The record gives the reactivity of an RNA of 207 nucleotides to DMS and 2A3. The reactions ran in a buffer of 150 mM KOAc, 10 mM MgCl2 and 150 mM bicine (pH 8.5), at 24 C. The 2A3 profile rests on 3,310 reads.

RNA sequence: GGGAACGACUCGAGUAGAGUCGAAAAGAGCAACUUAGGAUUUUAGGCUCCCCGGUGCGUAUCGAACCGCGCCGGGCCAAACCCACAGGGGCUGGCGGUCCUGUGCGGUCAAAAUCUUUCCGCUGGAAUACCUAUCCCAGUUUCGACUGGGAUAGAACAUUUAGAUGGGAUUCGUCCCAUCUAAAUGAAAAGAAACAACAACAACAAC
Reactivity to DMS in 0.01 (KOAc 150mM, MgCl2 10mM, bicine 150mM(pH8.5), 24C), signal-to-noise 2, nucleotides 027 to 156: g030a090g020c020a020a050c030u000u000a050g020g000a040u000u000u000u000a300g000g000c010u000c020c010c000c020g020g010u000g010c020g020u000a300u000c130g010a220a100c170c030g020c030g000c020c010g030g000g030c000c060a040a020a090c010c000c000a070c060a010g010g010g000g040c030u020g020g000c010g020g000u010c010c000u000g000u000g030c070g040g000u000c050a050a030a060a050u000c020u000u000u000c000c030g040c000u000g000g000a080a160u000a030c140c010u010a010u000c000c000c010a010g000u000u010u000c170g040a060c020u000g010g010g010a000u000a000g000a070a160
Reactivity to 2A3 in 0.01 (KOAc 150mM, MgCl2 10mM, bicine 150mM(pH8.5), 24C), signal-to-noise 3, nucleotides 027 to 156: g000a000g000c020a020a110c090u050u070a090g090g070a080u060u040u020u070a040g030g000c000u010c000c000c010c010g000g000u010g000c000g010u040a160u300c120g060a070a060c080c000g000c000g000c000c000g000g000g000c000c000a030a010a010c000c000c000a000c000a000g000g000g020g020c000u000g020g010c010g000g020u030c000c010u000g010u000g040c250g000g000u040c030a020a020a000a020u040c020u100u130u020c010c010g000c020u000g000g050a140a080u140a170c000c000u000a000u000c000c000c000a010g000u000u050u140c160g080a030c000u000g000g000g000a000u000a000g000a000a000
It was measured as part of the RMDB library M2RFPK. 2A3 adducts were read by reverse transcription with SuperScript II with manganese.